RNA sequence: GGGAACGACUCGAGUAGAGUCGAAAAGCGAAAAACCCAUCUGUGAACAAAGAGCCACGUUGGGAGACGAUUCAACCUUGUUCAAGUAACCUGAAAUGAGUUUUGUGCACAGUUCAACCAGCGAUAGCUUGGAUCCUUUGUUCGCAAAGGAUCCAAGAAAAGAAACAACAACAACAAC
Reactivity to DMS in 0.01 (KOAc 150mM, MgCl2 10mM, bicine 150mM(pH8.5), 24C), signal-to-noise 3, nucleotides 027 to 126: g010c100g010a060a070a050a150a130c020c020c000a090u020c030u010g010u000g010a020a060c020a040a070a060g010a120g000c090c050a040c160g020u010u000g010g000g000a240g020a070c060g010a190u000u000c060a060a090c250c040u000u000g000u000u000c040a030a130g010u010a090a100c140c020u000g000a020a060a060u000g010a110g010u000u010u000u000g010u000g030c090a050c100a030g010u010u000c130a080a200c100c020a070g010c080g000a090u010a110g000
Reactivity to 2A3 in 0.01 (KOAc 150mM, MgCl2 10mM, bicine 150mM(pH8.5), 24C), signal-to-noise 2, nucleotides 027 to 126: g090c070g040a110a020a000a070a060c000c030c000a000u040c050u070g030u000g040a050a030c030a080a110a070g060a040g030c060c020a030c050g000u000u000g010g010g010a050g020a010c050g050a020u100u070c030a050a080c030c020u030u080g060u030u040c050a090a060g000u020a090a060c010c010u020g080a070a060a090u060g000a030g040u020u060u040u050g060u070g010c060a000c010a070g020u080u040c010a020a040c020c010a000g050c030g100a110u040a060g070